[RMDB]
RNA sequence: GGGAACGACUCGAGUAGAGUCGAAAAGACCGUCAGUUAGACGGAAGAAGUGCAUAAAUCCACACCGGAAGACGAGAUACUGCACAAAUGUGGAUAAGCGUACGGAUCUACGUGCGCUAAACGUGAGACUCCUCAUGGCAUUCGUGCCAUGAGGAGUAAAAGAAACAACAACAACAAC
Reactivity to 2A3 in 0.01 (KOAc 150mM, MgCl2 10mM, bicine 150mM(pH8.5), 24C), signal-to-noise 2, nucleotides 027 to 126: g050a080c000c000g000u010c000a130g040u050u270a120g000a020c000g040g000a000a010g040a020a050g010u090g000c020a050u100a090a200a000u020c000c050a040c000a050c090c040g030g110a110a030g000a010c010g000a000g000a090u040a090c030u130g030c060a050c010a200a130a100u210g010u130g000g030a000u030a120a010g000c000g000u000a000c000g020g010a030u070c060u240a010c080g000u020g010c010g000c010u010a000a020a000c050g060u050g000a000g080
Reactivity to DMS in 0.01 (KOAc 150mM, MgCl2 10mM, bicine 150mM(pH8.5), 24C), signal-to-noise 2, nucleotides 027 to 126: g020a170c010c000g000u010c000a190g090u060u080a060g000a050c020g000g000a120a030g020a130a160g010u000g000c090a040u000a060a100a070u000c040c000a040c130a160c180c080g030g020a090a090g020a100c040g010a200g000a060u000a120c230u020g070c050a020c020a020a070a060u000g010u010g000g010a070u000a040a030g000c000g000u020a040c000g010g000a140u110c120u060a030c040g020u000g000c000g010c000u000a000a040a090c110g000u000g000a070g000